RNA sequence: GGGAACGACUCGAGUAGAGUCGAAAAGGAGAAGCACUUUUCCGACAAGUGACACGAGAUCUAUCGAUUGAGGAACGCGAAUACUUCUCGCUGUGCUUCUACGACAAAGAUGAGGGAACACGACAUAUAUGACGUGGGGAUUCGUCCCCACGUCAUAAAAAGAAACAACAACAACAAC
Reactivity to 2A3 in 0.01 (KOAc 150mM, MgCl2 10mM, bicine 150mM(pH8.5), 24C), signal-to-noise 1, nucleotides 027 to 126: g100g040a040g010a010a020g000c000a000c110u050u100u120u080c070c000g030a040c030a050a090g050u000g110a050c000a020c190g050a030g000a080u050c020u080a180u120c050g000a080u000u140g050a020g010g060a060a050c040g060c030g020a070a000u050a220c040u040u000c010u040c030g000c020u050g000u020g000c000u000u000c010u020a050c020g170a010c020a050a030a040g090a000u130g010a100g010g050g000a000a060c050a000c040g070a050c050a060u270a010
Reactivity to DMS in 0.01 (KOAc 150mM, MgCl2 10mM, bicine 150mM(pH8.5), 24C), signal-to-noise 2, nucleotides 027 to 126: g000g020a030g060a020a010g010c060a050c020u010u000u000u000c100c010g030a100c090a070a120g010u000g000a210c150a090c020g000a150g020a080u010c030u010a240u000c040g010a180u010u000g000a100g010g000a140a100c190g000c010g030a020a080u000a040c070u000u010c100u000c010g030c080u010g000u000g000c000u000u010c010u000a120c040g000a060c120a050a090a050g000a020u020g000a090g000g010g000a060a060c090a030c210g010a060c110a100u010a080